Structure probing data (DMS and 2A3) for a 177-nucleotide construct. DMS adducts were read by reverse transcription with MarathonRT. Source: RMDB library OK2TRN, as collected in RNAgym. The reactions ran in a buffer of 150 mM KOAc, 10 mM MgCl2 and 150 mM bicine (pH 8.5), at 24 C. The 2A3 profile rests on 13,319 reads.

RNA sequence: GGGAACGACUCGAGUAGAGUCGAAAAGCGAUCACUCUAGCGACGAUCCGUACCCAUGAUGAUCGCGCUAGUGCACGAUCGUCAUGUCUAGUAGAUCACUAGUCAGGAUCUGACGGUACCAUGCUAGUAGAAUAGCUGGAUUCGUCCAGCUAUUCUAAAAAGAAACAACAACAACAAC
Reactivity to DMS in 0.01 (KOAc 150mM, MgCl2 10mM, bicine 150mM(pH8.5), 24C), signal-to-noise 8, nucleotides 027 to 126: g020c060g000a030u000c020a260c070u010c010u000a020g010c020g030a180c110g010a020u000c020c090g000u000a100c140c110c070a060u010g010a070u000g000a000u000c000g010c020g010c000u000a060g010u010g010c120a060c120g000a000u000c010g010u000c050a030u000g000u000c040u000a050g010u000a050g000a070u000c110a070c020u000a070g010u000c080a060g010g010a110u010c030u000g000a050c060g010g000u000a070c040c060a090u000g010c010u000a030g010
Reactivity to 2A3 in 0.01 (KOAc 150mM, MgCl2 10mM, bicine 150mM(pH8.5), 24C), signal-to-noise 8, nucleotides 027 to 126: g050c030g010a010u020c010a040c070u030c010u020a000g010c020g300a300c040g010a120u020c040c010g040u080a140c030c040c020a020u140g040a060u040g000a000u020c000g000c000g000c020u060a050g060u060g100c100a030c140g000a010u000c010g000u020c010a030u090g080u000c020u020a050g020u010a040g050a140u110c050a030c070u060a080g060u050c040a030g130g120a230u080c050u050g020a010c010g000g010u040a050c020c000a020u110g020c000u010a040g030